RNA sequence: GGGAACGACUCGAGUAGAGUCGAAAACUCAGUGAGAAACUCUGGGCGAGAAGCACGUACCAGCAGAGUCACCCUGAGGUAGAGGCUGCUCACUAUAUAACCGUGUAAGGGAGGUAGACUUACGUGGACAAUGAUACUUUUUCGAAAGUAUCAUUGUAAAAGAAACAACAACAACAAC
Reactivity to DMS in 0.01 (KOAc 150mM, MgCl2 10mM, bicine 150mM(pH8.5), 24C), signal-to-noise 3, nucleotides 027 to 126: c010u000c020a040g000u020g020a040g000a060a090a070c020u000c010u000g000g010g000c040g010a070g010a170a110g040c090a090c060g020u010a070c050c030a070g010c100a050g000a070g000u000c030a100c000c000c000u000g000a000g000g000u070a300g000a280g000g000c140u000g000c030u000c110a200c140u000a290u000a290u180a020a140c020c020g030u010g000u010a010a030g000g000g000a010g000g000u000a020g000a020c000u000u000a030c020g000u000g000g000
Reactivity to 2A3 in 0.01 (KOAc 150mM, MgCl2 10mM, bicine 150mM(pH8.5), 24C), signal-to-noise 2, nucleotides 027 to 126: c000u000c000a000g010u000g020a090g020a050a050a020c000u000c000u000g010g000g000c010g010a060g010a060a020g060c030a000c030g010u020a100c000c010a000g020c010a000g010a010g020u000c000a010c000c000c000u020g040a000g000g010u070a060g010a060g030g000c040u020g000c000u000c000a070c000u000a000u010a030u010a300a030c010c000g000u000g000u030a010a010g010g010g010a010g010g030u020a010g000a010c000u000u020a010c000g020u030g000g000
Chemical mapping of a 177-nucleotide RNA with DMS and 2A3. The RNA was probed in 150 mM KOAc, 10 mM MgCl2 and 150 mM bicine (pH 8.5) at 24 C. 2A3 adducts were read by reverse transcription with SuperScript II with manganese.